Background: The record gives the reactivity of an RNA of 177 nucleotides to 2A3 and DMS. The data come from the RNA Mapping Database (RMDB), library OK1LIB. For DMS, 1,584 sequencing reads were counted. 2A3 adducts were read by reverse transcription with SuperScript II with manganese. 2A3 is a SHAPE reagent: it acylates the 2'-hydroxyl of flexible nucleotides of all four kinds.

[RMDB]
RNA sequence: GGGAACGACUCGAGUAGAGUCGAAAAUGAAUCGGUAAAGAGAAUGUCAACAAGUGGUGUGAGUGACGUUCGUGCAUCAUUAACUGACUUAUACAUGUGAUAAGAAACCUCUCAAAUUGGAGCAUAAGAAAUUAUCCGUGUUCGCACGGAUAAUUUCAAAAGAAACAACAACAACAAC
Reactivity to 2A3 in 0.01 (KOAc 150mM, MgCl2 10mM, bicine 150mM(pH8.5), 24C), signal-to-noise 3, nucleotides 027 to 126: u260g000a000a090u080c020g040g090u240a070a070a010g100a000g010a100a110u150g050u070c010a000a090c010a190a160g030u020g140g080u130g040u030g060a110g010u060g020a060c030g030u100u060c000g040u060g000c010a050u020c000a000u010u140a060a070c010u010g070a030c010u040u010a040u030a100c110a090u270g110u100g030a060u020a050a030g130a100a000a000c020c000u020c000u000c070a090a110a140u130u150g080g000a040g040c030a060u060a160a100
Reactivity to DMS in 0.01 (KOAc 150mM, MgCl2 10mM, bicine 150mM(pH8.5), 24C), signal-to-noise 2, nucleotides 027 to 126: u040g000a060a100u030c060g010g000u020a080a120a080g000a120g000a120a100u020g000u000c020a020a040c140a120a100g090u020g030g000u030g030u040g000a110g060u000g000a020c030g000u040u000c000g000u000g000c300a040u000c000a070u020u000a130a170c140u040g000a020c000u000u010a000u000a030c010a070u030g010u020g010a010u020a000a090g000a070a050a040c030c010u000c050u010c070a120a090a100u010u060g020g000a040g060c100a040u000a110a120